[RMDB]
RNA sequence: GGGAACGACUCGAGUAGAGUCGAAAAUGCCUGCUCCUGGGCAGGGAAUGGGCUGGGCUGGGCUGGGCUAGGCUGGAUUCGCACCUCACCCUCCCCAGGCCUACUCCUCUACUUGAAAGUGAAAGGAUGGCUGGGCACUCCUGGGGGCUUGCAGGAGGAUAUGUUAGAUCUUCGGAUCUAACAUAUCAAAAGAAACAACAACAACAAC
Reactivity to 2A3 in 0.01 (KOAc 150mM, MgCl2 10mM, bicine 150mM(pH8.5), 24C), signal-to-noise 2, nucleotides 027 to 156: u050g020c010c000u010g000c000u030c010c000u090g020g070g000c040a020g020g030g000a060a110u060g000g020g100c090u060g030g010g070c100u090g030g020g000c100u090g060g020g020c080u050a040g020g000c060u070g030g060a190u230u140c040g000c040a060c010c000u020c040a040c000c000c010u040c010c010c010c010a010g050g020c000c000u030a040c010u010c000c000u030c020u020a030c020u090u160g150a270a150a080g030u070g080a180a050a000g050g020a050u110g030g020c050u030g060g010g000c060a010c070u040c010c000u030g010g000g010g000g010c000u040u070g060c020a000g000g060a000g020

About this RNA:
An RNA of 207 nucleotides, treated with 2A3 and read out base by base. High 2A3 reactivity points to a flexible backbone, as in loops and unpaired stretches. It was measured as part of the RMDB library OK3TST.